This 177-nucleotide RNA was probed chemically with 2A3 and DMS. For 2A3 the reverse transcriptase was SuperScript II with manganese.

RNA sequence: GGGAACGACUCGAGUAGAGUCGAAAAGAGAGCUGCUUCGGCAGCUCUCCGUCAGGUAGUUCCUAUCUCAAUUACCUGUAGUGGCCAACGUCCGGAUUGGAAGAGAGCCCUGCUUCGGCAGGGCUAAUUGAGAGUACUAGUUCGCUAGUACUCUCAAAAAAGAAACAACAACAACAAC
Reactivity to 2A3 in 0.01 (KOAc 150mM, MgCl2 10mM, bicine 150mM(pH8.5), 24C), signal-to-noise 2, nucleotides 027 to 126: g000a000g040a000g000c000u020g000c030u100u090c300g160g020c020a000g000c000u020c000u000c000c010g060u020c010a010g000g090u030a010g020u020u070c050c000u060a140u170c070u020c040a020a200u070u030a030c010c010u020g020u090a130g060u100g080g030c040c030a060a030c090g040u010c030c000g040g200a250u030u130g050g020a070a050g050a030g000a000g070c040c000c000u000g010c020u020u070c170g060g000c000a010g020g000g000c000u000a000a000
Reactivity to DMS in 0.01 (KOAc 150mM, MgCl2 10mM, bicine 150mM(pH8.5), 24C), signal-to-noise 6, nucleotides 027 to 126: g010a020g000a010g020c000u000g020c020u000u000c200g020g020c000a010g010c000u000c000u000c010c040g000u010c030a030g000g010u000a030g010u000u000c090c080u000a120u010c110u010c100a060a040u010u000a010c010c010u000g010u010a080g020u010g000g010c020c020a070a090c110g000u000c060c050g000g000a170u010u000g000g000a100a100g000a130g000a050g010c000c000c010u000g000c010u010u010c210g030g000c000a000g000g000g000c010u000a000a020